RNA sequence: GGGAACGACUCGAGUAGAGUCGAAAACCUACAUUUUCUAUGGCACCUGUUGAAUUUUAUGAAGACCGCAUCUUGGACUUUAAAGUUCUUGAUAAUGGUAUCAUUAGGGAUGUAAAUCCUGAUGAUAAGAGGUAGUACUUCGGUACUACCAAAAGAAACAACAACAACAAC
Reactivity to 2A3 in 0.01 (KOAc 150mM, MgCl2 10mM, bicine 150mM(pH8.5), 24C), signal-to-noise 7, nucleotides 027 to 129: c000c000u040a010c040a090u080u080u020u040c050u080a080u070g050g000c020a010c020c020u050g040u120u150g080a100a120u030u040u060u100a130u110g080a050a010g060a010c020c010g030c070a030u000c000u020u030g000g000a000c000u020u090u190a130a290a020g000u000u000c000u030u020g020a030u050a110a080u150g050g000u020a010u000c000a000u000u040a090g030g020g040a040u100g070u210a010a100a030u030c000c000u000g010a000u000g000a000u000a040a060g070a010
Reactivity to DMS in 0.01 (KOAc 150mM, MgCl2 10mM, bicine 150mM(pH8.5), 24C), signal-to-noise 5, nucleotides 027 to 129: c030c030u040a010c180a000u040u010u020u110c050u060a040u020g000g000c010a100c000c050u050g020u070u050g050a020a040u010u000u010u010a080u050g030a090a070g020a050c030c000g000c230a000u040c070u020u010g000g000a000c040u010u030u070a050a080a050g020u040u000c020u010u000g010a070u040a040a080u050g020g060u000a060u010c010a040u050u020a050g020g030g020a060u030g030u080a060a060a030u000c020c010u000g020a030u040g010a040u030a080a090g000a170

An RNA of 170 nucleotides, treated with 2A3 and DMS and read out base by base.